[RMDB]
RNA sequence: GGGAACGACUCGAGUAGAGUCGAAAAUUAAUUAUUCCAUUUGGAGCGCCUAGCUAUUUCAAGUUAAACUCCACAUCAGUUAGAGGAUGGACGCCAUUCACAAAUUGUGUAACAUUUUCGGAAAAUACUACUGCUACUGAUUCGUCAGUAGCAGUAGAAAAGAAACAACAACAACAAC
Reactivity to 2A3 in 0.01 (KOAc 150mM, MgCl2 10mM, bicine 150mM(pH8.5), 24C), signal-to-noise 1, nucleotides 027 to 126: u030u020a060a090u090u110a070u120u000c050c000a020u100u000u110g040g020a010g000c050g050c030c040u000a020g000c020u110a140u050u300u170c020a010a000g010u010u050a040a150a000c000u000c000c020a020c000a060u090c010a000g080u100u110a050g020a000g080g010a010u020g050g000a040c010g060c080c010a030u050u090c080a030c030a040a090a050u120u050g020u020g080u160a110a050c010a050u000u090u090u100c040g090g000a050a070a020a070u110a050
Reactivity to DMS in 0.01 (KOAc 150mM, MgCl2 10mM, bicine 150mM(pH8.5), 24C), signal-to-noise 2, nucleotides 027 to 126: u000u020a130a140u010u010a100u000u000c000c010a150u010u010u000g040g000a110g000c020g000c120c060u020a080g010c020u000a070u010u010u010c130a060a080g010u000u030a040a080a100c040u000c000c030a050c180a050u000c110a090g000u010u000a050g000a060g010g000a050u000g000g000a100c090g020c040c020a030u000u000c070a030c160a060a010a060u000u000g020u000g000u000a060a100c040a070u000u000u010u000c020g010g010a040a050a120a080u010a140

Chemical mapping of a 177-nucleotide RNA with 2A3 and DMS. Reactivities are rounded to 0.1 and cut off at 0 and 3. DMS adducts were read by reverse transcription with MarathonRT. For DMS, 1,195 sequencing reads were counted.